[RMDB]
Chemical mapping of a 177-nucleotide RNA with DMS and 2A3. The data come from the RNA Mapping Database (RMDB), library OK2TST. The RNA was probed in 150 mM KOAc, 10 mM MgCl2 and 150 mM bicine (pH 8.5) at 24 C. 2A3 adducts were read by reverse transcription with SuperScript II with manganese. For DMS, 1,501 sequencing reads were counted.

RNA sequence: GGGAACGACUCGAGUAGAGUCGAAAAGGUGAGCCCCUCUCCAUACGGGUCUCCGAAGGUCUUCUCGGCAGGGUACUCGAUGCCCGCGGCAUGCCCAUAGACGACAAGGGGCCCCUCCCUCCAGGGAGUACGGAUGAACGUUCGCGUUCAUCCGUACAAAAGAAACAACAACAACAAC
Reactivity to DMS in 0.01 (KOAc 150mM, MgCl2 10mM, bicine 150mM(pH8.5), 24C), signal-to-noise 2, nucleotides 027 to 126: g010g000u010g010a150g000c000c000c010c020u010c150u010c010c040a190u010a080c170g020g010g000u000c110u010c010c020g020a100a120g000g020u000c040u010u010c070u010c130g010g000c040a110g020g010g020u010a020c040u000c120g020a250u000g010c000c010c000g000c120g010g050c220a120u010g000c020c020c050a120u000a050g010a080c100g000a050c080a110a130g000g010g020g000c020c010c000c000u000c010c010c000u010c040c060a130g010g020g010a210
Reactivity to 2A3 in 0.01 (KOAc 150mM, MgCl2 10mM, bicine 150mM(pH8.5), 24C), signal-to-noise 2, nucleotides 027 to 126: g080g030u080g060a050g050c000c010c000c000u020c010u000c000c010a030u050a170c050g060g010g040u030c080u080c080c020g070a070a030g080g020u010c050u160u050c060u120c010g020g020c030a060g010g010g000u050a030c000u080c210g160a260u070g020c000c000c000g000c010g010g020c090a090u150g000c000c000c000a080u090a070g070a010c050g010a010c030a020a060g000g000g000g000c000c030c000c000u020c010c000c020u000c010c020a050g080g020g030a100